RNA sequence: GGGAACGACUCGAGUAGAGUCGAAAAUUGCUGCAAUGUUGAAUCACAAUUUAUCGCAACUCAUUGGUAGCAAGGCCUCCGAGUUGAAAGUCAAGGAUCCAAGAAGUUAUGGAUGGGAACCACGGGACAGGUCACGUGAGUUCGCUCACGUGACCUGAAAAGAAACAACAACAACAAC
Reactivity to DMS in 0.01 (KOAc 150mM, MgCl2 10mM, bicine 150mM(pH8.5), 24C), signal-to-noise 1, nucleotides 027 to 126: u000u010g030c000u000g030c040a030a010u000g010u010u030g000a060a180u000c140a120c080a100a050u010u000u000a080u020c190g020c160a080a080c030u000c030a060u000u000g000g010u000a030g040c120a040a070g000g030c020c060u030c010c000g000a060g000u000u000g010a060a040a100g000u000c080a160a090g000g000a050u020c030c040a080a140g020a180a140g010u000u000a050u010g040g000a040u010g010g000g000a030a060c050c050a070c180g050g000g000a110